[RMDB]
RNA sequence: GGGAACGACUCGAGUAGAGUCGAAAAGAAGAGAGAGGAUCAGUCGAUCGAGACUUCCUCUGAGACUAGAGAGGACUGAUCCUCUGAUCGAUCCUGAGAUCUCCUCUUCUCUCAGGACUUCUCGAAGGACUCUAGUCUCGACUCUGAGAGACUAGGACCCAGAUACCUCAUUCGUGAGGUAUCUGGGAAAAGAAACAACAACAACAAC
Reactivity to 2A3 in 0.01 (KOAc 150mM, MgCl2 10mM, bicine 150mM(pH8.5), 24C), signal-to-noise 2, nucleotides 027 to 156: g010a020a000g010a000g080a000g000a030g000g030a010u020c020a010g050u010c000g030a040u010c020g010a050g020a110c060u090u040c050c010u010c040u070g020a060g040a060c230u160a060g030a000g000a030g200g000a000c110u040g030a140u150c080c080u000c010u020g000a000u020c000g000a020u060c000c070u030g030a010g000a170u050c030u000c030c020u000c000u040u010c000u010c010u000c020a000g180g000a010c000u080u020c010u040c040g050a040a000g100g050a060c020u030c000u030a020g010u000c000u000c000g060a090c060u070c140u300g110a110g000a000g000a100c000u020a000g040g000a000
This 207-nucleotide RNA was probed chemically with 2A3. For 2A3 the reverse transcriptase was SuperScript II with manganese. Source: RMDB library OK3TST, as collected in RNAgym. Conditions: 150 mM KOAc, 10 mM MgCl2 and 150 mM bicine (pH 8.5), 24 C.